[RMDB]
RNA sequence: GGGAACGACUCGAGUAGAGUCGAAAAGAAGUGGCAGGGACAUGCCCCAGAAGCUCGUUCUAGCAACAUAUGUUUGGCUAGUUCGAGCGAUUAGUCUCGAGGAGCGUCCUCUCGCCUUUUGACGAGACACCUGGUCCAUAUUCGUAUGGACCAGGUGAAAAGAAACAACAACAACAAC
Reactivity to 2A3 in 0.01 (KOAc 150mM, MgCl2 10mM, bicine 150mM(pH8.5), 24C), signal-to-noise 4, nucleotides 027 to 126: g110a030a010g100u140g060g000c030a030g120g000g030a100c070a120u130g020c000c000c020c000a050g020a120a000g000c000u010c010g010u010u000c010u000a000g000c010a010a070c010a100u300a090u300g160u150u100u090g150g040c000u000a000g000u000u000c000g000a010g000c000g000a000u000u020a030g040u010c000u000c050g010a110g010g000a090g020c030g010u040c030c000u050c000u010c030g000c000c000u060u030u020u120g030a020c000g000a000g010a020
Reactivity to DMS in 0.01 (KOAc 150mM, MgCl2 10mM, bicine 150mM(pH8.5), 24C), signal-to-noise 3, nucleotides 027 to 126: g010a230a060g000u000g000g030c070a040g000g010g020a150c150a060u010g000c020c000c030c050a090g000a090a140g000c010u000c000g010u000u000c000u000a000g000c000a040a040c030a210u030a070u030g000u030u000u000g000g000c000u000a000g010u000u000c000g010a000g000c010g020a000u020u030a060g010u010c020u010c030g020a120g000g000a200g010c130g020u020c020c040u040c020u000c010g000c030c010u010u040u010u080g010a040c020g000a030g000a160
An RNA of 177 nucleotides, treated with 2A3 and DMS and read out base by base. High 2A3 reactivity points to a flexible backbone, as in loops and unpaired stretches. The DMS profile rests on 5,123 reads.